[RMDB]
RNA sequence: GGGAACGACUCGAGUAGAGUCGAAAAUGGGUGCGGGACAACUACAUGCCGGGAUUCGUCCCAUCAUUCGAGAAAGGAGAGUAACACAUGGCAUUCAAUCUGCGUGCUGCUAUCGACGCUGCAAAGAACAAAGGCCCGGACAUGACGCAAGCGUCUGUCCUUCAUUAACGUUCGCGUUAAUGAAGGAAAAAGAAACAACAACAACAAC
Reactivity to DMS in 0.01 (KOAc 150mM, MgCl2 10mM, bicine 150mM(pH8.5), 24C), signal-to-noise 4, nucleotides 027 to 156: u000g000g030g050u000g020c120g020g010g040a080c010a080a130c050u000a090c060a080u010g010c050c040g000g000g000a190u000u000c120g010u010c000c020c000a130u000c060a140u000u000c040g010a140g010a080a080a090g000g010a140g000a090g020u000a060a050c060a090c040a070u000g010g000c060a130u000u000c080a050a150u000c080u020g030c080g020u020g000c030u000g020c000u000a080u000c030g010a050c030g030c010u000g010c030a090a070a110g020a050a070c020a060a090a120g010g010c030c010c010g010g010a080c040a070u010g010a080c060g030c030a050a140g020c030g010u000c020u010g000
Reactivity to 2A3 in 0.01 (KOAc 150mM, MgCl2 10mM, bicine 150mM(pH8.5), 24C), signal-to-noise 4, nucleotides 027 to 156: u110g040g000g010u070g010c060g010g000g010a020c020a080a050c100u130a050c040a080u060g040c020c000g020g010g020a020u110u120c100g020u040c030c030c010a030u040c010a020u010u100c050g020a030g110a060a040a010g050g040a050g000a000g040u140a110a020c040a000c030a170u120g080g000c010a020u050u050c020a030a100u030c030u100g020c010g040u030g000c010u000g000c000u060a040u240c070g000a010c020g000c000u000g000c020a080a100a060g050a090a040c030a070a080a050g060g000c010c010c000g000g020a010c010a040u060g030a010c040g010c030a030a130g000c000g020u000c010u020g060

This 207-nucleotide RNA was probed chemically with DMS and 2A3. The data come from the RNA Mapping Database (RMDB), library OK3TST. The RNA was probed in 150 mM KOAc, 10 mM MgCl2 and 150 mM bicine (pH 8.5) at 24 C. 2A3 is a SHAPE reagent: it acylates the 2'-hydroxyl of flexible nucleotides of all four kinds. The 2A3 profile rests on 3,351 reads. DMS (dimethyl sulfate) methylates the pairing face of unpaired adenines and cytosines.